[RMDB]
RNA sequence: GGGAACGACUCGAGUAGAGUCGAAAAAAAUUUAAUCAGUCAUGAGUUUAGUAAUCAUACCUAGUCAUAAUACAUCACACAGGACUAUUUACAAAAGACAGUUAAAAAAUGGAAUAAUCAUGUAGUACUUGGUUAACUGGUUCGCCAGUUAACCAAGAAAAGAAACAACAACAACAAC
Reactivity to 2A3 in 0.01 (KOAc 150mM, MgCl2 10mM, bicine 150mM(pH8.5), 24C), signal-to-noise 1, nucleotides 027 to 126: a000a000a020u020u010u040a030a010u030c030a000g000u000c010a010u050g040a010g000u020u030u000a050g000u010a100a100u050c010a000u010a130c000c040u000a000g010u000c050a000u020a210a060u070a180c020a050u080c000a020c000a000c000a090g000g130a000c020u060a080u080u130u000a000c000a000a080a000a000g040a020c060a010g020u180u090a070a010a000a000a000a090u110g050g040a040a140u090a060a000u120c050a000u140g000u060a010g000u030a060
Reactivity to DMS in 0.01 (KOAc 150mM, MgCl2 10mM, bicine 150mM(pH8.5), 24C), signal-to-noise 1, nucleotides 027 to 126: a010a200a030u020u010u020a000a060u000c060a060g130u090c010a080u000g000a220g000u000u000u000a010g000u040a070a020u180c090a030u000a100c100c120u000a030g010u060c000a070u050a260a210u000a000c100a120u020c080a020c050a160c080a100g000g010a080c010u000a080u000u000u000a000c100a020a090a060a120g020a030c120a090g000u010u060a000a020a000a090a130a030u120g000g000a020a040u000a080a110u000c030a010u000g000u000a000g000u000a080
Structure probing data (2A3 and DMS) for a 177-nucleotide construct. 2A3 adducts were read by reverse transcription with SuperScript II with manganese. DMS adducts were read by reverse transcription with MarathonRT. The 2A3 profile rests on 926 reads. Source: RMDB library OK1LIB, as collected in RNAgym.